[RMDB]
RNA sequence: GGGAACGACUCGAGUAGAGUCGAAAAGAAGCUGGUAGGUGUAAGGUAUAUGAAGGUGUGGAGGGAUGGAAGUACUGAAAUAAUAGGGCUGUGGAUUGUGAAUGACGUAAACAAUAUGCCUAGUGAGCUAAGGACUGAUAUUCGUAUCAGUCCUUAGAAAAGAAACAACAACAACAAC
Reactivity to 2A3 in 0.01 (KOAc 150mM, MgCl2 10mM, bicine 150mM(pH8.5), 24C), signal-to-noise 5, nucleotides 027 to 126: g070a030a010g030c080u060g040g020u080a070g000g040u060g040u070a050a040g050g010u080a110u010a020u170g080a080a020g040g010u080g020u090g070g100a080g030g000g010a020u040g020g030a040a010g020u040a060c030u030g040a100a020a010u150a030a050u080a070g050g000g010c040u030g030u070g130g040a060u050u070g020u020g060a090a070u130g030a020c070g030u080a040a060a010c030a020a030u100a030u150g000c000c020u030a040g090u020g150a030g020
Reactivity to DMS in 0.01 (KOAc 150mM, MgCl2 10mM, bicine 150mM(pH8.5), 24C), signal-to-noise 8, nucleotides 027 to 126: g010a130a130g020c060u000g010g020u000a050g000g010u010g010u010a090a070g010g010u000a060u010a090u010g010a120a080g000g010u010g020u010g010g000a120g010g000g000a090u000g000g000a080a080g020u000a070c080u010g010a060a080a070u010a060a100u010a130g000g000g000c040u010g010u000g010g000a070u000u000g010u000g010a090a090u000g000a080c130g010u000a060a070a040c070a040a030u000a090u000g000c020c010u000a090g010u010g000a100g010
Record summary
The record gives the reactivity of an RNA of 177 nucleotides to 2A3 and DMS. As a SHAPE reagent, 2A3 marks flexible, mostly unpaired nucleotides at the ribose 2'-OH. Conditions: 150 mM KOAc, 10 mM MgCl2 and 150 mM bicine (pH 8.5), 24 C.